RNA sequence: GGGAACGACUCGAGUAGAGUCGAAAACAAACAAGUCACAAGUGAGUUCAAUGGUUGAUGCCUUGUCCUGGAAUCAUAAACUUGGCCUCCCAACCUACCCCAAUCUAUAUUCAGCCCUGCCUCUGAAGGCCCAGCAACCCAAACAAUUGCCCUGGGAGUACGUUAGUACCUUCGGGUACUAACGUACAAAAGAAACAACAACAACAAC
Reactivity to 2A3 in 0.01 (KOAc 150mM, MgCl2 10mM, bicine 150mM(pH8.5), 24C), signal-to-noise 2, nucleotides 027 to 156: c050a000a090a000c020a010a040g000u070c060a010c020a140a000g030u040g020a050g000u090u150c070a090a050u120g040g020u000u000g030a030u070g000c000c000u050u070g040u070c010c000u070g050g050a080a090u120c050a140u100a090a040a020c020u050u020g030g000c000c000u030c000c000c000a030a070c030c010u060a040c000c000c020c020a000a030u050c110u060a120u030a110u130u130c010a020g000c000c010c010u040g020c010c000u010c010u050g040a040a000g000g000c000c000c020a000g030c010a010a070c020c030c010a030a060a060c070a010a170u090u110g040c010c020c000u010g020g000g010a040

An RNA of 207 nucleotides, treated with 2A3 and read out base by base.
2A3 adducts were read by reverse transcription with SuperScript II with manganese.
Reactivities are given for positions 27 through 156.
It was measured as part of the RMDB library OK3TST.
Conditions: 150 mM KOAc, 10 mM MgCl2 and 150 mM bicine (pH 8.5), 24 C.